Description:
An RNA of 177 nucleotides, treated with DMS and 2A3 and read out base by base. DMS adducts were read by reverse transcription with MarathonRT. Values cover nucleotides 27 to 126. 2A3 adducts were read by reverse transcription with SuperScript II with manganese. Values are in units of 0.01, from 0 to 300, in steps of 10.
RNA sequence: GGGAACGACUCGAGUAGAGUCGAAAAUUUCUGACACUUCGAGAUAUGUUUUGUAGGAUUGUCGUCCUAUUUACGUGUUUAAGCCUGGGGAGAGGUGUAAUAGCGAGAACCAGGUGUAGGCAUUAUGGUUGCCUAGGGUAUUCGUACCCUAGGCAACAAAAGAAACAACAACAACAAC
Reactivity to DMS in 0.01 (KOAc 150mM, MgCl2 10mM, bicine 150mM(pH8.5), 24C), signal-to-noise 1, nucleotides 027 to 126: u000u020u100c000u000g020a030c020a030c000u040u000c000g000a120g000a070u000a040u030g030u000u000u070u000g000u000a080g000g000a030u170u060g000u020c130g090u000c010c000u000a070u040u000u090a010c180g000u000g020u000u000u000a230a180g020c000c000u020g000g150g000g000a220g020a090g000g000u000g020u010a010a040u030a110g000c040g000a050g000a230a110c010c000a080g000g020u000g030u000a100g030g020c070a000u010u020a070u040g000
Reactivity to 2A3 in 0.01 (KOAc 150mM, MgCl2 10mM, bicine 150mM(pH8.5), 24C), signal-to-noise 2, nucleotides 027 to 126: u020u020u000c050u050g050a010c010a070c060u050u150c120g060a060g060a080u170a030u210g040u040u170u020u120g070u040a010g000g020a010u030u120g170u290c140g020u000c000c000u000a010u040u110u050a030c030g000u030g020u060u120u040a020a030g000c000c000u000g000g000g000g000a180g050a040g030g040u050g020u090a060a210u130a000g190c150g010a140g000a110a010c000c000a000g000g000u030g010u000a000g000g000c000a000u030u080a100u110g090